The record gives the reactivity of an RNA of 207 nucleotides to 2A3 and DMS. For DMS, 2,282 sequencing reads were counted. 2A3 adducts were read by reverse transcription with SuperScript II with manganese. DMS adducts were read by reverse transcription with MarathonRT. The RNA was probed in 150 mM KOAc, 10 mM MgCl2 and 150 mM bicine (pH 8.5) at 24 C. For 2A3, 2,065 sequencing reads were counted.
[RMDB]
RNA sequence: GGGAACGACUCGAGUAGAGUCGAAAAAGUGAGCUCUCCCUACUCCUUUGUACAUAGAGCUCGCAACACCAUCAAAUUGCCGGGACAUCCUGUUCACAUGCUGCUGGUACCUCCAGGCACAGGGAAACCUUGCACUGGAACCAUGGUGAAAGCCGUGCUAUAAAAAUCGGUUCGCCGAUUUUUAUAGAAAAGAAACAACAACAACAAC
Reactivity to 2A3 in 0.01 (KOAc 150mM, MgCl2 10mM, bicine 150mM(pH8.5), 24C), signal-to-noise 4, nucleotides 027 to 156: a010g020u000g000a000g000c000u000c010u060c000c020c010u000a010c010u100c090c040u230u230u230g050u050a050c030a070u260a040g000a000g000c000u010c000g000c000a020a040c020a020c030c010a020u070c050a020a060a220u140u110g030c050c040g050g000g020a060c020a060u100c010c040u030g020u100u100c080a050c020a130u100g020c010u030g000c010u000g030g000u040a080c000c040u020c000c010a020g010g020c010a030c080a020g000g000g030a030a030a060c000c000u020u020g010c120a170c170u020g010g020a030a060c030c010a040u050g000g000u030g060a080a020a010g020c020c010g030u040g000
Reactivity to DMS in 0.01 (KOAc 150mM, MgCl2 10mM, bicine 150mM(pH8.5), 24C), signal-to-noise 1, nucleotides 027 to 156: a110g000u010g010a000g010c030u010c030u010c070c090c030u000a030c030u010c170c080u000u010u000g040u010a080c080a100u010a070g000a040g020c010u010c000g000c010a140a090c080a110c000c000a060u000c080a070a130a200u000u010g000c000c040g000g030g020a120c050a120u000c020c050u000g000u030u000c040a080c080a270u000g010c000u010g040c010u000g010g010u000a100c050c060u000c000c000a060g000g000c040a010c080a050g040g000g000a180a110a190c010c020u000u000g010c000a150c000u000g000g000a030a050c040c000a060u010g000g030u040g010a150a090a140g060c000c010g080u000g020